[RMDB]
RNA sequence: GGGAACGACUCGAGUAGAGUCGAAAAGAUAUGGAAAGCGAGGUACCAACUAUAAUCUCGGAAACGAGGUAGUUGCGUACUACCCACCGCUUUCCUAAGUCAAAAUCGACCCGUUCGCGGGUCGAAACAUAACCGACAGGUUCGCCUGUCGGUUAUGAAAAGAAACAACAACAACAAC
Reactivity to DMS in 0.01 (KOAc 150mM, MgCl2 10mM, bicine 150mM(pH8.5), 24C), signal-to-noise 3, nucleotides 027 to 126: g010a060u000a300u000g010g010a000a020a000g000c010g000a080g010g000u000a010c000c000a020a010c000u000a040u010a280a070u010c000u010c000g000g000a050a130a180c000g000a010g010g000u000a010g000u010u000g000c250g010u010a010c010u000a030c030c030c060a300c100c010g010c000u010u000u000c000c000u000a040a110g000u000c080a070a080a110a110u000c000g010a010c000c010c000g000u000u010c190g010c000g000g000g030u010c020g000a000a040a150
Reactivity to 2A3 in 0.01 (KOAc 150mM, MgCl2 10mM, bicine 150mM(pH8.5), 24C), signal-to-noise 1, nucleotides 027 to 126: g020a040u150a050u150g000g000a000a030a000g000c020g000a010g000g010u000a010c000c000a020a000c000u010a020u060a280a300u140c000u000c020g000g050a070a080a020c010g000a000g020g010u010a000g000u000u030g040c100g010u000a000c000u000a010c020c000c000a060c030c010g000c000u000u000u000c000c020u010a150a030g060u050c040a010a040a030a300u010c010g010a010c010c010c000g020u040u080c300g000c000g040g000g000u010c010g000a000a000a000
The record gives the reactivity of an RNA of 177 nucleotides to DMS and 2A3. DMS adducts were read by reverse transcription with MarathonRT. As a SHAPE reagent, 2A3 marks flexible, mostly unpaired nucleotides at the ribose 2'-OH. Conditions: 150 mM KOAc, 10 mM MgCl2 and 150 mM bicine (pH 8.5), 24 C. Reactivities are rounded to 0.1 and cut off at 0 and 3. DMS (dimethyl sulfate) methylates the pairing face of unpaired adenines and cytosines.